The record gives the reactivity of an RNA of 177 nucleotides to DMS and 2A3. DMS adducts were read by reverse transcription with MarathonRT. The 2A3 profile rests on 1,010 reads. Source: RMDB library OK1LIB, as collected in RNAgym. 2A3 adducts were read by reverse transcription with SuperScript II with manganese.
[RMDB]
RNA sequence: GGGAACGACUCGAGUAGAGUCGAAAAGGGUCUGCUGGCGCAGAAUCCAACAAGAGAGAGGGAAGGGAGAACACCUGUCUAGUCUGAGGAGGUACAGGUGCGCGUGUCUGUCUGCGACCUCGUCAGCACGCAUCAGGGUCUUCGGACCCUGAUGCGUAAAAGAAACAACAACAACAAC
Reactivity to DMS in 0.01 (KOAc 150mM, MgCl2 10mM, bicine 150mM(pH8.5), 24C), signal-to-noise 1, nucleotides 027 to 126: g050g000g000u030c000u010g030c000u000g110g010c210g000c030a020g030a120a050u040c030c030a110a160c040a040a010g000a120g000a060g010a010g020g010g000a080a060g090g000g070a020g000a080a240c130a130c010c050u000g050u010c110u050a070g000u000c020u020g000a150g010g030a010g000g050u020a070c030a030g000g030u030g020c130g000c100g010u000g000u000c000u000g000u000c000u000g000c230g010a000c020c040u000c000g020u000c010a040g000c060
Reactivity to 2A3 in 0.01 (KOAc 150mM, MgCl2 10mM, bicine 150mM(pH8.5), 24C), signal-to-noise 2, nucleotides 027 to 126: g020g000g010u030c010u030g020c080u080g220g000c100g020c030a000g000a050a070u010c010c000a050a020c080a090a010g090a000g020a000g000a030g010g000g090a120a040g020g010g000a130g000a050a000c030a010c000c030u020g000u090c150u150a030g050u000c080u050g040a040g060g000a090g000g030u050a030c040a010g030g020u020g010c130g000c030g050u090g040u000c030u030g050u000c000u050g000c090g050a100c000c000u020c020g120u000c000a000g020c000